Annotation: An RNA of 207 nucleotides, treated with 2A3 and DMS and read out base by base. The 2A3 profile rests on 3,344 reads. DMS adducts were read by reverse transcription with MarathonRT. The data come from the RNA Mapping Database (RMDB), library RNAMAK.
RNA sequence: GGGAACGACUCGAGUAGAGUCGAAAAUACGACGUUCGCGUCGUAAAAAAGAUAUGGAGUUCGACGAAGGACAUGGGAGAUGGCCGUCGGAAACGACGGACCAUCGUUGAUCAUGUCCAGAGAACUCCUAAGUCAAAAAACCCGUUUCGACGGGUAACAUUAGUUGAGGUUUCGACCUCAACUAAUGAAAAGAAACAACAACAACAAC
Reactivity to 2A3 in 0.01 (KOAc 150mM, MgCl2 10mM, bicine 150mM(pH8.5), 24C), signal-to-noise 3, nucleotides 027 to 156: u050a010c000g000a010c000g000u040u110c300g000c050g040u020c020g010u030a000a010a000a000a010a050g050a020u070a040u070g000g040a010g000u000u010c040g120a150c070g040a300a100g010g010a000c010a010u010g000g000g000a030g000a010u000g000g010c000c010g010u000c000g000g010a080a070a010c000g000a000c010g010g030a040c000c010a000u000c000g000u010u010g000a000u000c000a000u000g000u000c000c000a000g000a000g000a010a000c000u000c000c000u010a020a000g010u020c000a000a000a040a050a060a080c000c000c040g000u040u080u060c150g070a030c000g000g000g020u030a040a020
Reactivity to DMS in 0.01 (KOAc 150mM, MgCl2 10mM, bicine 150mM(pH8.5), 24C), signal-to-noise 2, nucleotides 027 to 156: u000a020c000g010a040c010g000u000u000c300g070c040g040u000c000g010u020a000a040a030a110a050a130g000a170u000a300u000g000g000a040g050u000u000c010g020a300c150g030a180a110g010g070a010c000a020u020g010g030g000a050g000a040u000g000g020c010c000g000u000c000g020g010a120a100a160c000g000a030c000g010g020a050c050c000a020u000c010g020u020u000g000a080u010c000a030u000g040u000c010c010a010g000a180g000a010a020c000u000c000c010u000a010a020g020u010c030a000a100a100a050a090a060c000c000c010g000u000u000u010c240g010a050c000g010g030g000u000a010a090